Structure probing data (DMS and 2A3) for a 170-nucleotide construct. Source: RMDB library 15KLIB, as collected in RNAgym. The reactions ran in a buffer of 150 mM KOAc, 10 mM MgCl2 and 150 mM bicine (pH 8.5), at 24 C. Reactivities are given for positions 27 through 129. 2A3 adducts were read by reverse transcription with SuperScript II with manganese.
RNA sequence: GGGAACGACUCGAGUAGAGUCGAAAAGUACCAUCAGAAAAUGCUUAAGUCCAUGGCUGCAACUCGUGGAGCGACUUGCGUCAUUGGUACUACAAAGUUCUACGGUGGCUGGGAUUUCAUGCUUAAAAACCCCGAGGGUUCGCCCUCGGGAAAAGAAACAACAACAACAAC
Reactivity to DMS in 0.01 (KOAc 150mM, MgCl2 10mM, bicine 150mM(pH8.5), 24C), signal-to-noise 3, nucleotides 027 to 129: g020u020a100c040c070a070u100c080a000g050a060a050a090a100u050g000c060u010u010a030a070g000u010c000c050a030u040g020g020c020u100g080c000a080a030c150u000c040g040u010g040g060a140g070c090g060a000c070u000u000g040c180g100u020c110a060u080u180g010g040u170a020c040u010a110c150a090a060a070g000u050u000c090u070a080c130g060g000u020g020g000c030u000g000g000g060a120u000u070u040c030a090u060g070c020u040u020a060a120a070a210a090c300
Reactivity to 2A3 in 0.01 (KOAc 150mM, MgCl2 10mM, bicine 150mM(pH8.5), 24C), signal-to-noise 4, nucleotides 027 to 129: g010u000a030c000c000a030u120c030a010g150a070a090a010a020u130g010c020u050u050a020a000g010u000c010c010a100u070g010g000c040u090g030c130a020a070c010u040c060g060u070g120g060a130g050c010g050a050c020u000u000g000c030g050u040c030a040u050u220g060g050u090a040c000u000a020c050a020a050a020g030u040u000c010u070a020c080g000g000u010g040g000c020u000g000g040g010a000u030u000u100c020a000u080g000c030u190u170a060a150a000a060a050c000